[RMDB]
RNA sequence: GGGAACGACUCGAGUAGAGUCGAAAAGGAAAACGAUGCGUUGAAGUUACCGAUUUCCACGGUCAUCGUUGCGACGUUCUGGCCGUUACGCUGCACGCGGAACUGGUAAUAGGCCGGGCUUGCGCCGUCGGCCAUGUCGAACUGUGAGCCAACCAUAGUCUGUAAACAUAUUCGUAUGUUUACAGACAAAAGAAACAACAACAACAAC
Reactivity to 2A3 in 0.01 (KOAc 150mM, MgCl2 10mM, bicine 150mM(pH8.5), 24C), signal-to-noise 6, nucleotides 027 to 156: g030g010a020a030a010a010c020g020a020u050g020c050g040u040u060g050a050a030g020u050u060a130c070c060g020a060u010u020u000c020c020a020c030g030g040u080c010a020u020c010g020u020u070g060c020g020a020c020g040u120u140c060u080g020g010c010c000g030u020u010a020c030g020c040u100g040c050a030c050g070c010g050g040a130a120c040u070g010g030u090a180a150u120a250g140g000c000c020g020g010g000c020u080u100g010c020g010c020c030g040u050c000g000g000c030c020a010u060g020u010c020g010a040a030c020u040g030u050g050a030g040c000c030a030a020c020c010a070u030a020
Reactivity to DMS in 0.01 (KOAc 150mM, MgCl2 10mM, bicine 150mM(pH8.5), 24C), signal-to-noise 4, nucleotides 027 to 156: g020g000a060a040a030a080c020g010a030u010g010c050g010u000u010g040a110a160g020u000u000a090c060c020g010a140u000u000u000c010c020a110c060g010g000u000c010a070u000c060g020u000u000g020c020g000a060c050g000u000u000c140u000g030g060c010c010g020u000u000a020c040g020c020u000g040c060a060c050g020c020g010g000a050a080c030u000g030g030u000a060a130u010a130g040g010c000c000g020g020g020c040u000u000g000c080g030c040c010g000u010c020g010g000c010c020a040u000g010u000c020g000a050a070c040u000g020u000g000a210g010c020c050a080a160c020c010a020u000a230